An RNA of 177 nucleotides, treated with DMS and 2A3 and read out base by base.
RNA sequence: GGGAACGACUCGAGUAGAGUCGAAAAACUGCAGAAGAGUUUCCCACAAUUCGAGAUUGUGGCUCAGCAGGUCACUCCGAAUGACCAUGCUAAUGCCAGAGCUUUUUCGCAUCUGGCUAGUAAACUGCAUAAGCCGUUCGUUCGCGAACGGCUUAUGAAAAGAAACAACAACAACAAC
Reactivity to DMS in 0.01 (KOAc 150mM, MgCl2 10mM, bicine 150mM(pH8.5), 24C), signal-to-noise 2, nucleotides 027 to 126: a090c010u000g000c080a090g010a200a170g030a070g000u000u000u000c020c000c010a170c080a070a060u020u000c130g010a300g000a130u000u020g010u000g000g020c090u000c090a130g020c160a110g010g000u000c020a000c000u010c070c170g060a110a060u010g020a030c130c100a160u000g070c000u000a090a050u010g030c000c000a000g000a010g000c000u000u020u040u040u030c290g000c000a260u010c000u000g000g000c000u010a030g000u010a000a040a150c080u000g010
Reactivity to 2A3 in 0.01 (KOAc 150mM, MgCl2 10mM, bicine 150mM(pH8.5), 24C), signal-to-noise 1, nucleotides 027 to 126: a000c010u040g000c000a100g090a300a010g000a080g030u000u030u060c000c020c040a010c000a040a050u050u070c050g030a030g010a180u180u230g070u000g000g030c000u000c090a010g000c000a000g010g030u030c000a000c000u050c000c030g010a000a000u030g010a020c090c080a050u030g010c000u000a000a010u210g000c000c000a030g000a010g000c030u300u110u060u000u220c150g000c030a250u000c000u000g000g000c030u000a000g000u020a000a240a130c040u070g000
About this RNA: The 2A3 profile rests on 429 reads. The data come from the RNA Mapping Database (RMDB), library RFM100. For 2A3 the reverse transcriptase was SuperScript II with manganese. The RNA was probed in 150 mM KOAc, 10 mM MgCl2 and 150 mM bicine (pH 8.5) at 24 C.